[RMDB]
Chemical mapping of a 177-nucleotide RNA with DMS and 2A3. For DMS the reverse transcriptase was MarathonRT. Values are in units of 0.01, from 0 to 300, in steps of 10. The RNA was probed in 150 mM KOAc, 10 mM MgCl2 and 150 mM bicine (pH 8.5) at 24 C. The data come from the RNA Mapping Database (RMDB), library OK2TRN.

RNA sequence: GGGAACGACUCGAGUAGAGUCGAAAAAGCUCAUUGUGAACUAGAGCAUUCGGGGUCUUAUUUUAGUCUGUCUCCGCUUAAAUGUCUGGGAUCAGCUGUGGAUUGGCCUAGCACAAUAUCAGUUUGCUCGUAAGGAUGUUUUCGAACAUCCUUACGAAAAAGAAACAACAACAACAAC
Reactivity to DMS in 0.01 (KOAc 150mM, MgCl2 10mM, bicine 150mM(pH8.5), 24C), signal-to-noise 4, nucleotides 027 to 126: a080g010c010u000c040a090u000u000g010u000g010a120a100c080u000a070g010a070g010c020a120u000u000c070g010g000g010g010u010c040u000u000a060u010u000u000u000a050g010u010c030u000g020u000c030u000c010c090g000c110u000u010a050a100a090u010g010u000c030u000g000g010g010a040u000c050a050g000c030u000g020u010g010g010a090u000u000g010g000c020c020u000a060g010c080a050c060a050a040u000a060u000c140a050g010u000u010u000g000c130
Reactivity to 2A3 in 0.01 (KOAc 150mM, MgCl2 10mM, bicine 150mM(pH8.5), 24C), signal-to-noise 3, nucleotides 027 to 126: a010g030c010u010c020a090u070u090g040u070g080a090a070c030u040a070g010a020g050c010a020u050u070c030g000g030g000g100u000c040u090u100a110u070u120u010u100a040g020u000c060u060g030u020c000u000c040c010g000c060u090u130a110a190a170u160g030u000c020u040g060g000g010a090u070c020a020g000c020u070g030u090g120g020a110u010u080g050g000c010c010u020a020g030c040a020c010a030a070u070a050u160c030a020g060u030u130u110g040c030